The record gives the reactivity of an RNA of 177 nucleotides to 2A3 and DMS.
The DMS profile rests on 3,402 reads.
RNA sequence: GGGAACGACUCGAGUAGAGUCGAAAAUGAGCAGAAGAUUUUUCGCAGACUCACUGAGGGAAAAGUCGUUGUCAUGGGGCGAAAGACCUUUGAGUCUAUCGGCAAGCCUCUACCGAACCGUCACACACUGUGCAUGAUGAUUCGUCAUCAUGCACAGAAAAGAAACAACAACAACAAC
Reactivity to 2A3 in 0.01 (KOAc 150mM, MgCl2 10mM, bicine 150mM(pH8.5), 24C), signal-to-noise 3, nucleotides 027 to 126: u060g010a040g080c090a030g070a210a040g050a190u050u040u040u000u030c030g000c080a050g030a140c020u000c050a070c080u050g050a100g020g160g000a010a070a030a070g020u020c020g060u070u040g090u070c010a060u080g000g080g010g000c050g050a140a050a030g020a040c010c000u130u150u220g120a170g000u020c000u030a060u060c000g010g000c030a040a030g030c000c000u000c010u040a040c010c010g030a060a030c030c000g070u050c030a030c010a000c000a020
Reactivity to DMS in 0.01 (KOAc 150mM, MgCl2 10mM, bicine 150mM(pH8.5), 24C), signal-to-noise 4, nucleotides 027 to 126: u000g010a100g010c080a120g010a090a120g020a070u000u000u000u000u000c050g000c140a160g000a120c120u000c080a060c120u000g000a100g020g020g000a060a050a060a050g000u000c010g010u020u000g010u000c040a130u000g020g000g000g020c010g010a030a080a050g000a030c010c010u000u020u010g020a120g010u000c010u010a100u000c040g020g000c080a100a150g000c050c010u010c020u010a040c040c010g010a030a080c060c010g010u020c020a140c080a080c190a120